Source information: The record gives the reactivity of an RNA of 177 nucleotides to DMS and 2A3. The reactions ran in a buffer of 150 mM KOAc, 10 mM MgCl2 and 150 mM bicine (pH 8.5), at 24 C. DMS adducts were read by reverse transcription with MarathonRT. It was measured as part of the RMDB libraries RFM100 and RFMREP.
[RMDB]
RNA sequence: GGGAACGACUCGAGUAGAGUCGAAAAAUUAAUGUCACAUAUCGUUCGUUUCACUGGGCUACUACUACUCAACGCAUUUAUUGUGCGCGGUAGACCGGUGGGCGGCAUUCAACAUUAAGUCAGCUCGCGUAGACAGAUUCUUCGGAAUCUGUCUACGAAAAGAAACAACAACAACAAC
Reactivity to DMS in 0.01 (KOAc 150mM, MgCl2 10mM, bicine 150mM(pH8.5), 24C), signal-to-noise 2, nucleotides 027 to 126: a060u010u000a000a000u000g000u000c120a060c200a090u040a000u030c060g000u040u020c000g020u040u020u000c060a010c040u000g040g000g000c040u000a050c020u000a180c220u000a080c160u000c130a180a130c000g040c000a010u000u000u030a090u060u090g030u000g000c020g060c130g060g000u000a010g000a040c010c010g000g070u020g000g000g040c020g010g000c030a020u010u000c170a040a000c100a010u020u000a050a030g000u000c080a230g000c000u030c050g040
Reactivity to 2A3 in 0.01 (KOAc 150mM, MgCl2 10mM, bicine 150mM(pH8.5), 24C), signal-to-noise 8, nucleotides 027 to 126: a000u030u010a000a000u010g030u030c090a020c050a140u160a040u080c130g050u220u070c030g000u020u270u300c000a000c000u010g000g000g040c010u050a030c000u030a030c000u040a080c020u060c130a080a060c020g000c000a000u040u090u160a240u220u300g000u000g000c010g000c030g010g000u010a010g020a090c010c000g000g000u000g000g010g000c000g000g010c000a000u040u070c040a020a040c000a000u010u030a030a020g070u060c060a020g020c040u030c040g010